[RMDB]
Structure probing data (2A3 and DMS) for a 207-nucleotide construct. For 2A3, 1,355 sequencing reads were counted. For 2A3 the reverse transcriptase was SuperScript II with manganese. DMS adducts were read by reverse transcription with MarathonRT. For DMS, 1,861 sequencing reads were counted.
RNA sequence: GGGAACGACUCGAGUAGAGUCGAAAAGCAACGCAAAGCCGCGGCAAGUGGAGUUAGCGAGAAUAGACUAGGCUUUGGUUUCUUCAAGUGAAGCGGUCACCAAUCAGGUGUGGUAGUUACCGUAAAAAUAACCGCUCUUUGUUCGCAAAGAGCGGAACCGUACGUUAAAGUUCGCUUUAACGUACGGAAAAGAAACAACAACAACAAC
Reactivity to 2A3 in 0.01 (KOAc 150mM, MgCl2 10mM, bicine 150mM(pH8.5), 24C), signal-to-noise 2, nucleotides 027 to 156: g010c010a000a040c030g010c120a080a070a000g030c040c000g020c040g060g020c080a070a050g040u070g090g060a130g030u170u140a030g050c040g070a050g050a090a120u090a050g040a040c080u020a030g020g010c000u040u040u060g010g010u020u010u010c030u080u090c100a110a070g050u050g080a090a020g020c000g010g000u050c020a020c030c000a010a160u160c040a120g100g010u130g040u040g130g030u050a030g010u040u100a020c000c030g010u050a050a020a030a000a000u120a070a070c000c000g010c000u020c000u000u000u010g020u020u060c110g000c080a000a000a000g000a000g000c020g010g000a000a000
Reactivity to DMS in 0.01 (KOAc 150mM, MgCl2 10mM, bicine 150mM(pH8.5), 24C), signal-to-noise 1, nucleotides 027 to 156: g040c040a090a120c010g040c030a070a120a200g000c080c060g070c070g010g060c030a080a170g010u000g010g000a120g020u000u000a070g030c070g000a100g010a080a100u010a090g000a100c070u000a090g000g030c010u000u010u000g000g000u010u000u010c030u000u010c030a070a170g000u000g000a090a150g020c020g000g000u000c040a050c010c000a030a150u010c080a030g000g030u000g040u000g010g020u000a050g000u010u000a030c030c030g060u000a000a050a060a070a150u020a140a160c010c000g020c000u000c000u000u000u000g010u000u020c270g020c080a000a000a060g000a010g040c010g000g000a000a000
Conditions: 150 mM KOAc, 10 mM MgCl2 and 150 mM bicine (pH 8.5), 24 C.